[RMDB]
RNA sequence: GGGAACGACUCGAGUAGAGUCGAAAAGAUAUGGAACGGAUACUGACAUGUCACUCGGAAACGAGAAUGACAACAGCAGUGCCGUUCCUAAGUCAAAGAUAGAACUCGGUUCGCCGAGUUCUAUCAACACAAUACCAUAGUUCGCUAUGGUAUUGUGAAAAGAAACAACAACAACAAC
Reactivity to 2A3 in 0.01 (KOAc 150mM, MgCl2 10mM, bicine 150mM(pH8.5), 24C), signal-to-noise 7, nucleotides 027 to 126: g010a010u030a020u070g000g000a010a000c010g010g020a040u060a160c010u030g170a170c060a090u030g000u000c000a010c010u000c000g020g020a030a040a020c020g000a010g090a150a300u070g010a000c010a070a020c060a050g190c000a000g000u010g010c000c010g000u000u000c000c000u000a020a000g010u000c010a050a080a100g000a010u000a000g010a000a010c000u000c010g000g080u100u080c300g050c110c000g000a000g000u000u000c000u000a000u000c000a010a010
Reactivity to DMS in 0.01 (KOAc 150mM, MgCl2 10mM, bicine 150mM(pH8.5), 24C), signal-to-noise 9, nucleotides 027 to 126: g000a030u010a300u010g000g000a010a010c000g010g010a070u010a010c000u000g000a170c100a200u000g000u000c000a050c000u000c000g010g000a070a080a140c010g010a010g010a070a130u000g000a010c000a010a080c260a130g000c010a000g010u000g000c000c000g000u000u000c000c000u000a010a060g010u000c030a090a110a110g000a010u000a000g000a010a000c000u000c000g000g010u000u010c230g030c000c000g010a010g010u000u000c000u000a000u000c010a090a200